[RMDB]
Conditions: 150 mM KOAc, 10 mM MgCl2 and 150 mM bicine (pH 8.5), 24 C. The record gives the reactivity of an RNA of 207 nucleotides to 2A3 and DMS.
RNA sequence: GGGAACGACUCGAGUAGAGUCGAAAAGGGACUGGCCCGAUGAAGCCCGGCAACCUAACUUUAUUUAAGCGUAAAGUGAAGGUGCUAAUUCCAGCAAAAUGGUGUAUUCCGUUUAGGUAGAUAAGAGAAGCGUGACAUGAGUUCGCUCAUGUCACAAUCAAUGAAGGGCGUUCGCGCCCUUCAUUGAAAAAGAAACAACAACAACAAC
Reactivity to 2A3 in 0.01 (KOAc 150mM, MgCl2 10mM, bicine 150mM(pH8.5), 24C), signal-to-noise 2, nucleotides 027 to 156: g010g030g010a010c020u020g000g030c000c000c000g020a030u090g070a040a050g060c050c050c030g000g020c030a120a140c010c010u050a020a040c010u070u040u010a030u060u230u050a150a050g060c080g040u010a010a010a010g000u010g100a100a000g000g000u000g000c010u000a060a060u110u020c020c000a010g020c070a080a030a010a110u090g040g000u050g030u050a080u020u080c010c000g030u060u090u110a090g010g010u040a050g040a150u110a290a060g040a000g020a140a040g160c050g100u000g000a000c000a000u000g000a000g010u070u110c170g020c110u010c000a000u000g000u000c000a010c000a000a000
Reactivity to DMS in 0.01 (KOAc 150mM, MgCl2 10mM, bicine 150mM(pH8.5), 24C), signal-to-noise 2, nucleotides 027 to 156: g020g000g020a070c040u030g010g030c040c000c020g010a110u020g000a100a110g020c010c040c080g000g020c050a030a050c000c010u000a230a040c010u010u010u000a000u000u010u010a180a220g040c200g010u010a010a010a040g010u000g010a120a040g010g000u000g020c060u000a040a190u000u000c000c010a140g050c050a050a080a090a130u000g010g030u000g010u000a150u010u000c040c000g000u000u010u000a090g020g000u000a060g000a120u000a090a090g010a180g000a080a120g030c170g010u000g010a000c010a010u000g000a030g000u020u020c300g010c030u020c020a020u000g010u000c010a000c010a050a080